[RMDB]
RNA sequence: GGGAACGACUCGAGUAGAGUCGAAAAUAUGGUGGAGCUUCAGUGUGUCUCUAUUGCCGUGCGCAUAUAGAACAUCCUGAUGUCUCUGGUGUUUGUAAAUAUAAGGGUAAGUUUGUCCAAAUCCCUGCGGAUUGCUAAUGUUCGCAUUAGCAAUCCGAAAAGAAACAACAACAACAAC
Reactivity to DMS in 0.01 (KOAc 150mM, MgCl2 10mM, bicine 150mM(pH8.5), 24C), signal-to-noise 2, nucleotides 027 to 126: u010a090u010g020g010u010g020g000a010g020c010u000u010c000a000g020u010g020u000g020u000c160u010c010u000a010u000u000g020c010c060g080u010g040c220g020c020a020u020a000u000a000g000a000a040c000a000u000c290c000u000g000a000u000g000u000c020u000c000u010g040g020u000g010u000u000u000g010u000a090a080a050u000a170u010a130a040g000g020g000u000a080a240g000u000u000u010g010u020c030c040a060a170a180u020c000c010c000u000g030
Chemical mapping of a 177-nucleotide RNA with DMS. The DMS profile rests on 1,182 reads. Reactivities are rounded to 0.1 and cut off at 0 and 3. Source: RMDB library 15KREP, as collected in RNAgym. DMS adducts were read by reverse transcription with MarathonRT. Conditions: 150 mM KOAc, 10 mM MgCl2 and 150 mM bicine (pH 8.5), 24 C. Reactivities are given for positions 27 through 126.